[RMDB]
RNA sequence: GGGAACGACUCGAGUAGAGUCGAAAAUACUAAGUGAAGUUUAUCUUGAUAACGGAGCACAACGGGAAAUUGGAUUAGUGUUAGCACCUGUAUCUGUUGAUAUUCAUCAUCAAAAUAAAGGUAUUGGUAAAUACGCAGGGUUCGCCCUGCGUAUUUAAAAAGAAACAACAACAACAAC
Reactivity to 2A3 in 0.01 (KOAc 150mM, MgCl2 10mM, bicine 150mM(pH8.5), 24C), signal-to-noise 3, nucleotides 027 to 126: u130a010c090u050a000a170g100u030g060a010a010g020u000u010u110a070u030c050u050u120g040a030u030a120a040c070g020g000a000g040c000a000c050a100a140c060g040g070g130a100a250a200u150u200g100g050a120u110u220a100g040u030g070u080u030a010g060c030a040c020c000u020g010u020a030u010c020u040g050u040u020g040a020u020a050u110u060c010a050u030c000a000u010c060a040a180a060a060u180a010a070a000g120g040u020a060u010u070g050g000
Reactivity to DMS in 0.01 (KOAc 150mM, MgCl2 10mM, bicine 150mM(pH8.5), 24C), signal-to-noise 5, nucleotides 027 to 126: u010a080c030u020a090a140g020u010g000a050a050g000u010u000u000a040u010c040u000u000g000a060u010a080a040c060g010g000a060g030c020a060c060a040a030c070g000g000g000a040a060a100u030u010g010g020a170u010u010a070g010u020g010u000u010a110g000c100a050c010c000u000g020u020a020u010c020u000g010u010u010g000a030u010a050u010u010c090a060u010c020a040u010c080a030a020a070a080u050a060a070a060g010g010u010a020u010u000g000g000

An RNA of 177 nucleotides, treated with 2A3 and DMS and read out base by base. The RNA was probed in 150 mM KOAc, 10 mM MgCl2 and 150 mM bicine (pH 8.5) at 24 C. For 2A3 the reverse transcriptase was SuperScript II with manganese. Values are in units of 0.01, from 0 to 300, in steps of 10. For 2A3, 1,662 sequencing reads were counted.